[RMDB]
The record gives the reactivity of an RNA of 207 nucleotides to 2A3 and DMS.
The reactions ran in a buffer of 150 mM KOAc, 10 mM MgCl2 and 150 mM bicine (pH 8.5), at 24 C.
DMS adducts were read by reverse transcription with MarathonRT.
Reactivities are given for positions 27 through 156.
RNA sequence: GGGAACGACUCGAGUAGAGUCGAAAAAGCAAAUCACUUAUGGGCAAUAUUUGAUAACGUUUGAUCAUUCUAGUGCUCCACACUUAAAAUUGAUGUACGUUCAUGGCGGUUAAUACUAGAUUUCUGCAUCACAACCGCCUCAUCUAUAGAAACCAAACAACCUGUACUCAUUCGUGAGUACAGGUUGAAAAGAAACAACAACAACAAC
Reactivity to 2A3 in 0.01 (KOAc 150mM, MgCl2 10mM, bicine 150mM(pH8.5), 24C), signal-to-noise 4, nucleotides 027 to 156: a010g100c070a070a070a060u140c040a020c080u110u110a050u170g010g020g000c040a060a100u040a060u110u070u100g030a070u070a090a040c050g010u020u070u150g090a040u030c010a010u080u000c030u080a000g040u000g060c030u020c050c020a050c000a000c020u090u100a080a050a050a120u100u110g010a030u020g040u070a020c050g030u040u090c100a050u140g010g000c000g000g030u010u070a060a050u060a190c080u070a050g030a120u060u060u080c060u130g060c030a040u040c020a020c030a020a010c000c010g000c000c000u010c000a010u000c000u010a040u030a070g150a100a060a010c030c050a000a020a090
Reactivity to DMS in 0.01 (KOAc 150mM, MgCl2 10mM, bicine 150mM(pH8.5), 24C), signal-to-noise 2, nucleotides 027 to 156: a090g030c040a050a140a100u010c060a050c070u000u000a070u000g000g030g020c020a090a120u000a070u000u000u000g000a140u000a060a040c060g000u010u000u010g020a070u000c010a110u000u000c020u000a020g010u000g000c050u000c150c090a050c010a070c030u000u010a070a020a110a030u010u010g000a060u000g030u000a050c050g000u010u010c080a080u010g010g050c000g030g020u000u000a070a090u000a080c040u000a080g030a270u000u000u000c070u000g020c050a040u000c050a190c110a030a050c000c000g020c000c020u000c030a020u000c060u000a140u010a090g000a140a060a100c030c020a050a090a240